[RMDB]
RNA sequence: GGGAACGACUCGAGUAGAGUCGAAAAGAUAUGGAUCCUCCCCACCUCCAAACAGCGUUGAAAUCGGAAACGAUGGAGCUGGUAGGAGAGGGAUCCUAAGUCACGGGAGUGUGUUCGCACACUCCAAGACUGUGCAUUCGUUCGCGAAUGCACAGUCAAAAGAAACAACAACAACAAC
Reactivity to 2A3 in 0.01 (KOAc 150mM, MgCl2 10mM, bicine 150mM(pH8.5), 24C), signal-to-noise 2, nucleotides 027 to 126: g110a040u220a090u290g030g000a050u050c030c020u110c070c010c040c020a000c030c000u050c000c000a080a300a140c000a010g000c010g300u300u040g070a010a030a010u010c010g010g070a030a010a090c030g000a010u000g000g000a060g010c010u000g000g020u000a030g000g000a010g010a000g030g030g000a010u000c000c000u000a180a030g180u150c080a040c230g140g000g000a000g010u010g010u010g010u060u190c300g070c090a000c000a000c020u000c000c000a020a000
Reactivity to DMS in 0.01 (KOAc 150mM, MgCl2 10mM, bicine 150mM(pH8.5), 24C), signal-to-noise 2, nucleotides 027 to 126: g020a100u010a170u000g020g030a000u000c000c000u010c300c000c000c010a300c100c020u000c010c050a010a170a300c000a000g010c000g030u000u010g000a100a080a000u000c000g010g010a050a080a150c030g000a020u000g000g000a100g000c010u000g000g000u020a300g010g000a000g000a190g040g000g000a020u000c000c000u000a040a080g000u030c030a180c240g000g010g000a010g010u000g010u000g000u000u010c230g010c000a000c010a000c030u030c010c000a070a070